Chemical mapping of a 170-nucleotide RNA with DMS and 2A3. The DMS profile rests on 16,660 reads. The RNA was probed in 150 mM KOAc, 10 mM MgCl2 and 150 mM bicine (pH 8.5) at 24 C. For DMS the reverse transcriptase was MarathonRT. For 2A3 the reverse transcriptase was SuperScript II with manganese.
RNA sequence: GGGAACGACUCGAGUAGAGUCGAAAACCAAAGAGACCGGGGGGGAGUUUGGAGCGCGGGGGGGACCGUCGGGUCCGUGGGAUGCCCUUCCCGAUUCCGUCCAUCCCCACCCCCGGGUGUCCCCCCAAUGCCUCUCUCUUCGGAGAGAGGAAAAGAAACAACAACAACAAC
Reactivity to DMS in 0.01 (KOAc 150mM, MgCl2 10mM, bicine 150mM(pH8.5), 24C), signal-to-noise 4, nucleotides 027 to 129: c040c000a040a200a060g040a070g010a040c060c040g060g020g000g040g040g050g020a080g020u020u050u050g040g030a150g000c150g030c160g020g010g010g000g010g020g000a000c010c030g040u000c030g000g000g000u070c090c170g050u050g000g040g000a060u040g010c120c040c060u000u000c000c000c000g010a110u040u020c090c080g020u000c020c030a120u000c010c010c010c000a140c030c130c010c000c000g000g000g000u040g020u030c010c000c000c010c000c000a000a000u000g010
Reactivity to 2A3 in 0.01 (KOAc 150mM, MgCl2 10mM, bicine 150mM(pH8.5), 24C), signal-to-noise 8, nucleotides 027 to 129: c010c000a010a070a010g160a010g020a030c020c010g000g000g000g000g000g010g000a050g030u060u110u100g080g020a070g070c100g000c020g030g000g000g010g010g000g010a020c020c010g110u090c030g030g000g060u040c060c040g060u140g020g010g000a090u150g030c010c010c040u100u070c010c010c010g020a050u160u040c060c010g040u020c000c020a080u070c030c010c000c000a100c010c010c000c000c010g000g000g000u050g040u000c000c000c000c000c010c000a020a030u110g040